[RMDB]
An RNA of 177 nucleotides, treated with 2A3 and DMS and read out base by base.
The data come from the RNA Mapping Database (RMDB), library OK2TRN.
The reactions ran in a buffer of 150 mM KOAc, 10 mM MgCl2 and 150 mM bicine (pH 8.5), at 24 C.
Values cover nucleotides 27 to 126.
RNA sequence: GGGAACGACUCGAGUAGAGUCGAAAAAUUUGGCCUGGUUCGCGGAAUGGCUGCGCAAAAAAUCACUGAACGGCGGAGCGGCACGUUGUGGAGCCCCGUCGAAGGUACGUGACGUGCAGAUCAAGGAGGGAUAUAACUCAUUCGUGAGUUAUAUCCCAAAAGAAACAACAACAACAAC
Reactivity to 2A3 in 0.01 (KOAc 150mM, MgCl2 10mM, bicine 150mM(pH8.5), 24C), signal-to-noise 1, nucleotides 027 to 126: a000u080u080u100g050g000c030c010u060g040g060u040u050c040g030c030g060g050a120a040u060g000g000c000u020g010c030g000c070a000a000a120a040a080a050u040c040a010c030u020g070a170a020c000g000g000c010g010g010a020g010c010g050g140c020a010c150g230u230u300g000u060g040g140a040g010c000c000c000c000g030u000c010g040a010a010g030g020u050a020c030g070u010g040a040c070g000u010g030c000a000g030a080u100c030a080a050g090g010a030
Reactivity to DMS in 0.01 (KOAc 150mM, MgCl2 10mM, bicine 150mM(pH8.5), 24C), signal-to-noise 3, nucleotides 027 to 126: a110u000u000u000g010g000c030c020u010g020g000u010u000c040g030c080g010g000a080a090u010g010g000c020u000g010c030g020c050a010a050a090a080a060a100u000c060a060c030u010g010a110a160c050g000g000c020g000g010a040g000c010g010g020c020a020c020g000u000u010g050u000g010g010a130g000c020c000c020c000g010u010c050g010a020a050g000g000u010a090c200g010u000g000a050c140g000u000g010c030a070g020a110u000c050a080a100g010g010a300